[RMDB]
Source: RMDB library RFMREP, as collected in RNAgym. Structure probing data (2A3 and DMS) for a 177-nucleotide construct.
RNA sequence: GGGAACGACUCGAGUAGAGUCGAAAAGGCGGUGUUCGCACCGCCAGUCAUGUUGAAAGGGGAAAGGAACCCAAUCAACAAAUAUAAUGCGAGUAAGGAAUCGCAGCACGGGUGUCUUCGGACACCCCGAUACCUAACGGUUCGCCGUUAGGUAUCGAAAAGAAACAACAACAACAAC
Reactivity to 2A3 in 0.01 (KOAc 150mM, MgCl2 10mM, bicine 150mM(pH8.5), 24C), signal-to-noise 4, nucleotides 027 to 126: g000g000c020g020g000u000g020u040u090c120g040c070a000c000c010g000c000c000a000g000u010c010a020u090g000u020u000g030a020a010a010g020g020g040g040a070a160a220g120g050a070a090c010c000c000a000a020u020c010a000a000c010a000a010a000u200a000u060a080a180u050g000c010g010a020g050u110a140a110g190g100a120a080u010c010g000c020a020g000c050a040c040g010g000g000u000g010u000c010u040u070c140g090g000a000c000a010c000c000c000
Reactivity to DMS in 0.01 (KOAc 150mM, MgCl2 10mM, bicine 150mM(pH8.5), 24C), signal-to-noise 3, nucleotides 027 to 126: g010g010c000g030g040u000g020u000u000c220g030c010a010c000c000g020c000c000a030g000u000c170a140u000g020u000u000g000a000a020a300g000g000g020g010a110a170a190g020g010a110a240c000c000c000a010a300u010c000a010a000c000a050a140a030u010a110u020a110a020u000g000c030g000a020g000u040a120a230g030g000a160a090u000c010g000c020a030g030c160a100c170g000g000g000u000g020u000c000u000u000c170g020g010a000c000a010c000c000c010
The reactions ran in a buffer of 150 mM KOAc, 10 mM MgCl2 and 150 mM bicine (pH 8.5), at 24 C. The DMS profile rests on 2,025 reads.